[RMDB]
RNA sequence: GGGAACGACUCGAGUAGAGUCGAAAACAAGCGCGGCAGGUGCUCCGGAUGUUUGGAGCCGCGUCGCAAGCUGUAUCGGCACAUGCGAUGGCGGCCUCCUGUGCGGCCAGACUCUGGCAACCUGGCCUCUAGUCAGCCUGUUCGCGGGUUGGCUAGAAAAAGAAACAACAACAACAAC
Reactivity to 2A3 in 0.01 (KOAc 150mM, MgCl2 10mM, bicine 150mM(pH8.5), 24C), signal-to-noise 9, nucleotides 027 to 126: c040a020a030g060c040g000c020g050g000c010a010g000g020u030g020c030u020c020c010g040g020a080u120g090u100u120u100g030g010a010g000c000c000g000c000g000u000c000g000c000a000a010g000c010u050g040u240a160u210c110g020g000c010a030c010a070u020g000c000g010a000u020g210g000c000g000g000c010c010u020c000c000u020g020u050g030c020g010g000c000c000a010g010a040c030u020c030u070g020g000c010a020a010c000c000u010g060g000c000c000
Reactivity to DMS in 0.01 (KOAc 150mM, MgCl2 10mM, bicine 150mM(pH8.5), 24C), signal-to-noise 9, nucleotides 027 to 126: c070a110a090g010c080g020c060g000g010c020a030g000g010u010g000c100u010c030c020g000g010a050u020g010u000u010u000g010g010a070g010c000c000g010c010g010u000c000g000c010a020a040g010c030u000g010u040a090u050c150g000g010c010a090c190a190u010g000c000g000a020u000g010g030c000g000g000c060c050u000c020c010u000g010u010g010c060g010g010c020c000a020g000a050c050u010c050u010g000g000c300a100a070c090c010u000g000g000c010c020